[RMDB]
RNA sequence: GGGAACGACUCGAGUAGAGUCGAAAAGUCCUCACUUUCUUCUCUUGGCUGUAGAUCAGAAGCCUCAAAGGAAGCCCAAGGGUCCAAGCAUCUCGCUCUCCUCUCUCUGCUCCCUGCUCACCCUCCCAAUAGCUACAUAGUUCGCUAUGUAGCUAUUAAAAGAAACAACAACAACAAC
Reactivity to DMS in 0.01 (KOAc 150mM, MgCl2 10mM, bicine 150mM(pH8.5), 24C), signal-to-noise 9, nucleotides 027 to 126: g000u010c020c010u000c110a120c070u000u010u000c020u010u000c040u010c040u000u010g010g010c020u010g010u010a100g010a110u010c090a080g010a120a090g010c030c020u000c100a050a090a120g010g010a070a080g000c040c020c040a070a110g000g000g020u010c030c040a070a100g010c060a060u010c050u000c060g000c040u000c040u000c020c010u000c040u000c040u000c030u000g000c040u000c020c020c020u010g000c030u000c050a100c030c010c010u000c010c010c040
Reactivity to 2A3 in 0.01 (KOAc 150mM, MgCl2 10mM, bicine 150mM(pH8.5), 24C), signal-to-noise 9, nucleotides 027 to 126: g040u030c010c000u050c010a050c030u060u090u050c020u050u010c040u000c010u040u080g040g000c010u030g070u150a050g020a190u100c040a020g040a120a020g030c010c000u040c020a090a110a020g060g010a040a030g020c000c000c010a040a050g060g010g000u020c020c010a040a020g030c010a060u030c020u020c060g020c020u000c010u010c020c010u010c000u000c000u000c000u020g010c000u020c010c000c000u010g020c000u010c010a040c010c000c000u010c010c000c000